[RMDB]
RNA sequence: GGGAACGACUCGAGUAGAGUCGAAAAACAUCUCACUGGGAAGUGAGAUGUGAGUCAGCACGGGAGUGCUGACAGUCGAUUUGUCUUAUAUCGGGAAAGACAAGAGGAGAACGAGAUGUACGGGAGUAGAUCGAGUUCUGCUCGAGGAACCCGUAAGGUCUACAGGUCUAUUCGUAGACCUGUAGACAAAAGAAACAACAACAACAAC
Reactivity to DMS in 0.01 (KOAc 150mM, MgCl2 10mM, bicine 150mM(pH8.5), 24C), signal-to-noise 2, nucleotides 027 to 156: a020c000a020u000c000u000c000a030c010u000g090g060g010a300a010g060u000g000a020g030a020u000g030u010g000a060g010u010c000a010g050c000a030c010g010g000g000a170g030u000g010c000u000g000a020c010a030g020u010c040g000a060u010u000u000g030u000c010u000u000a100u000a200u000c000g010g000g000a100a040a060g000a170c050a060a240g000a050g000g000a130g010a040a060c020g010a300g010a010u000g050u000a080c000g000g060g000a290g000u000a060g010a050u000c000g000a300g010u000u000c040u000g000c000u000c010g000a230g000g000a180a130c010c000c000g000u020a120a100g040
Reactivity to 2A3 in 0.01 (KOAc 150mM, MgCl2 10mM, bicine 150mM(pH8.5), 24C), signal-to-noise 2, nucleotides 027 to 156: a000c000a000u010c000u000c000a000c000u010g030g070g050a090a000g010u000g000a010g000a000u000g000u000g000a010g000u000c000a000g000c010a010c020g070g050g040a140g000u000g010c000u010g000a000c000a000g060u040c000g050a070u000u020u130g040u000c010u030u110a070u020a040u170c010g010g010g020a100a120a020g060a030c010a020a020g010a010g070g100a030g000a010a000c020g000a000g010a060u020g070u120a000c000g060g060g030a120g020u050a030g020a070u010c000g000a010g010u000u000c010u030g040c000u010c000g010a020g020g010a040a080c000c010c000g020u020a020a040g060
The data come from the RNA Mapping Database (RMDB), library OK3TST. An RNA of 207 nucleotides, treated with DMS and 2A3 and read out base by base. The reactions ran in a buffer of 150 mM KOAc, 10 mM MgCl2 and 150 mM bicine (pH 8.5), at 24 C. DMS adducts were read by reverse transcription with MarathonRT. Reactivities are given for positions 27 through 156.